[RMDB]
RNA sequence: GGGAACGACUCGAGUAGAGUCGAAAACGUUGAGUACCCUCGAUCUCUGGCCCACUGUCCCGAUACGAUUAUUCGGGGUCAGCUGUUUGUAAGUCCCGUAUUCAACUUGUGCCGCACAGGGCAGGUUUUGGUUAUCACGUUUCGACGUGAUAACCAAAAAAGAAACAACAACAACAAC
Reactivity to DMS in 0.01 (KOAc 150mM, MgCl2 10mM, bicine 150mM(pH8.5), 24C), signal-to-noise 1, nucleotides 027 to 126: c110g000u000u030g000a080g000u000a000c120c000c030u000c070g000a090u030c020u000c020u000g000g000c020c040c050a270c060u000g000u000c000c000c030g000a040u050a050c170g000a270u030u010a100u070u030c030g000g000g000g000u040c000a070g000c120u050g030u020u000u000g000u000a030a030g000u020c000c000c000g000u020a040u020u000c040a060a040c070u000u020g020u000g040c000c050g000c130a050c300a040g000g000g010c030a060g000g000u000u020
Reactivity to 2A3 in 0.01 (KOAc 150mM, MgCl2 10mM, bicine 150mM(pH8.5), 24C), signal-to-noise 1, nucleotides 027 to 126: c000g000u000u080g050a030g060u090a220c000c000c000u000c000g080a170u070c120u020c010u010g080g000c020c020c000a030c000u020g020u000c000c000c000g040a050u020a100c060g070a190u040u090a130u120u100c060g000g000g000g030u010c010a000g080c010u060g000u110u050u010g110u050a120a000g050u070c000c000c000g040u030a080u130u090c000a010a030c000u110u120g050u070g300c000c000g020c020a050c010a060g000g000g000c020a020g020g000u000u020
An RNA of 177 nucleotides, treated with DMS and 2A3 and read out base by base. Source: RMDB library RFM100, as collected in RNAgym. The RNA was probed in 150 mM KOAc, 10 mM MgCl2 and 150 mM bicine (pH 8.5) at 24 C. Values cover nucleotides 27 to 126. DMS adducts were read by reverse transcription with MarathonRT.